Structure probing data (2A3 and DMS) for a 177-nucleotide construct. For DMS the reverse transcriptase was MarathonRT. The DMS profile rests on 4,805 reads.
RNA sequence: GGGAACGACUCGAGUAGAGUCGAAAAAGUACACGAUCGCGUACAUGAGUACGUACUGCUCUCUAGGAUCGGCCGACGAUCGCAUCUAUGCGAUCGGUACGUGUGAUCGCUGCGCGCGCAGCGCGGCCAACUACGACCCAUUCGUGGGUCGUAGUUGAAAAGAAACAACAACAACAAC
Reactivity to 2A3 in 0.01 (KOAc 150mM, MgCl2 10mM, bicine 150mM(pH8.5), 24C), signal-to-noise 3, nucleotides 027 to 126: a020g050u050a010c170a010c070g030a060u040c020g000c010g020u020a030c030a090u240g040a030g050u060a060c070g010u030a130c030u010g030c010u020c000u050c090u130a100g120g020a080u050c000g020g050c060c010g060a060c020g010a020u010c010g000c030a030u060c080u210a160u080g000c000g010a000u000c000g000g000u020a030c010g020u080g040u050g140a090u060c050g000c000u010g020c020g010c010g030c060g030c160a040g020c030g010c010g000g000c020
Reactivity to DMS in 0.01 (KOAc 150mM, MgCl2 10mM, bicine 150mM(pH8.5), 24C), signal-to-noise 4, nucleotides 027 to 126: a090g020u000a030c030a160c050g000a010u000c030g010c020g010u000a010c100a110u000g010a080g020u000a150c060g010u000a080c070u000g000c060u000c020u000c110u010a120g020g000a040u000c060g020g010c070c060g000a150c000g000a180u000c000g020c000a040u010c240u000a040u010g010c000g000a010u000c000g000g000u010a010c030g010u000g020u000g000a070u000c090g010c000u000g000c020g010c060g000c230g020c150a140g010c000g000c000g000g020c020